[RMDB]
Annotation:
Structure probing data (2A3 and DMS) for a 207-nucleotide construct. DMS (dimethyl sulfate) methylates the pairing face of unpaired adenines and cytosines. The reactions ran in a buffer of 150 mM KOAc, 10 mM MgCl2 and 150 mM bicine (pH 8.5), at 24 C. Values cover nucleotides 27 to 156. For DMS the reverse transcriptase was MarathonRT.
RNA sequence: GGGAACGACUCGAGUAGAGUCGAAAACGGUUACGCCUUCUUUACCGUUAUCAAGGAAGGUACUCGGCCAUGCUAAGGGAAGCAAUAUUCCUUAGGCGCAUGUCGCCGCCAGCAUGGUGUGAGGGGAAAAAGUAUGCUGGGUUCGCCCAGCAUACAACUUAAGUUCACUGUUCGCAGUGAACUUAAGAAAAGAAACAACAACAACAAC
Reactivity to 2A3 in 0.01 (KOAc 150mM, MgCl2 10mM, bicine 150mM(pH8.5), 24C), signal-to-noise 9, nucleotides 027 to 156: c000g000g010u030u030a040c060g010c000c000u010u010c010u020u030u040a020c010c020g270u150u090a050u100c060a020a000g040g000a000a010g010g010u050a060c010u010c010g030g000c000c000a000u000g000c020u060a070a080g000g000g010a020a000g030c130a150a120u100a180u210u030c010c000u050u080a070g010g000c000g010c040a190u260g110u300c030g000c020c000g010c030c030a000g000c000a000u000g000g040u060g140u160g040a040g010g030g010g090a020a080a020a010a040g000u000a010u000g000c000u000g000g000g050u020u040c160g080c030c000c000a000g000c000a000u000a000c000a000a000
Reactivity to DMS in 0.01 (KOAc 150mM, MgCl2 10mM, bicine 150mM(pH8.5), 24C), signal-to-noise 3, nucleotides 027 to 156: c020g030g010u000u000a000c010g010c010c000u000u000c000u010u000u000a030c010c020g020u010u000a010u000c090a050a010g010g040a030a020g010g030u000a050c020u000c000g020g010c000c010a030u010g010c000u000a130a110g000g010g030a020a030g020c030a170a130u010a300u000u000c000c010u010u000a080g010g020c020g050c010a120u010g040u000c010g030c000c010g020c070c080a060g010c010a010u000g000g040u000g010u000g000a100g010g000g030g000a030a060a060a080a150g020u000a010u010g000c020u010g010g010g030u000u000c300g000c000c000c000a010g010c000a000u000a000c000a030a070